[RMDB]
RNA sequence: GGGAACGACUCGAGUAGAGUCGAAAAAUACUAGGCCAGAAGAUGAAUCAGAUGGCAUCUGGAUGACAAGGUCAAAACAAUCCUCUCUGGUGUUCAUACUUGUUUCCAAGUUAGGAUGGGCUGAUUAACAAUUUAAGCGAUUCGUCGCUUAAAUUGUAAAAGAAACAACAACAACAAC
Reactivity to 2A3 in 0.01 (KOAc 150mM, MgCl2 10mM, bicine 150mM(pH8.5), 24C), signal-to-noise 2, nucleotides 027 to 126: a000u170a040c060u040a020g100g000c010c010a020g030a080a020g020a120u160g090a110a080u070c020a030g030a090u070g090g000c030a020u030c060u060g040g000a040u090g000a040c040a060a080g040g030u040c010a000a060a040a090c020a020a090u070c020c000u000c010u000c020u040g070g000u020g070u110u080c030a020u050a180c000u050u080g030u060u050u080c020c020a050a050g030u070u100a080g040g050a050u050g040g040g000c000u000g010a060u100u100a030
Reactivity to DMS in 0.01 (KOAc 150mM, MgCl2 10mM, bicine 150mM(pH8.5), 24C), signal-to-noise 4, nucleotides 027 to 126: a080u000a080c090u010a120g010g010c030c020a050g010a110a120g010a080u010g020a100a080u000c050a040g000a130u000g020g000c050a160u000c040u000g020g010a070u000g010a050c090a080a050g020g000u000c120a050a050a070a080c080a070a050u010c040c030u000c100u000c050u000g000g020u000g010u010u010c070a100u010a060c050u000u000g010u000u010u000c020c010a080a120g000u000u010a070g010g000a070u010g010g010g010c040u000g000a050u010u000a100

The record gives the reactivity of an RNA of 177 nucleotides to 2A3 and DMS.
2A3 is a SHAPE reagent: it acylates the 2'-hydroxyl of flexible nucleotides of all four kinds.
For DMS the reverse transcriptase was MarathonRT.
For 2A3 the reverse transcriptase was SuperScript II with manganese.
Source: RMDB library OK2TRN, as collected in RNAgym.
For DMS, 3,762 sequencing reads were counted.